[RMDB]
RNA sequence: GGGAACGACUCGAGUAGAGUCGAAAAGUAAGCAGGUGGUUUUAAUGCCUCAUUCUAAGUGCUAUUUAAAUUGGAUCUUGAAAGAUGAAUAAGGCCUGCCUUAAGUUCUGCUAAAGGCCAUGUUGUUAUUAAGGACGGGUGAGGAAGGACCAAGAAGAGGUAAUGAAGGUUUCGACCUUCAUUACCUAAAAGAAACAACAACAACAAC
Reactivity to 2A3 in 0.01 (KOAc 150mM, MgCl2 10mM, bicine 150mM(pH8.5), 24C), signal-to-noise 2, nucleotides 027 to 156: g050u040a000a060g050c040a030g000g050u050g100g020u090u010u070u140a090a070u130g020c020c000u030c010a070u130u070c020u100a110a030g030u020g120c010u020a090u110u180u210a070a150a140u070u040g050g010a050u020c020u020u060g070a110a050a020g020a050u120g060a070a060u080a070a010g020g010c020c030u030g000c000c000u050u020a040a030g020u070u050c020u080g050c030u040a110a000a050g060g010c020c000a020u050g000u070u010g010u020u030a050u030u130a090a050g060g000a060c060g010g040g020u030g000a020g020g000a040a040g000g010a010c000c010a010a000g060a040a030g090
Reactivity to DMS in 0.01 (KOAc 150mM, MgCl2 10mM, bicine 150mM(pH8.5), 24C), signal-to-noise 2, nucleotides 027 to 156: g000u000a150a130g000c050a050g000g000u010g010g010u020u010u010u000a030a140u000g030c030c010u000c010a090u010u000c070u030a090a090g020u000g010c020u010a120u000u000u000a040a080a160u000u020g020g040a090u000c050u000u000g000a070a050a150g000a090u000g000a070a130u000a080a080g040g040c020c040u000g000c090c020u000u000a040a120g010u010u000c050u000g000c030u000a090a060a120g030g020c040c040a100u000g000u000u000g010u000u000a090u010u010a080a110g020g030a050c060g010g010g030u000g000a070g010g020a050a060g040g000a080c020c020a050a100g040a030a120g000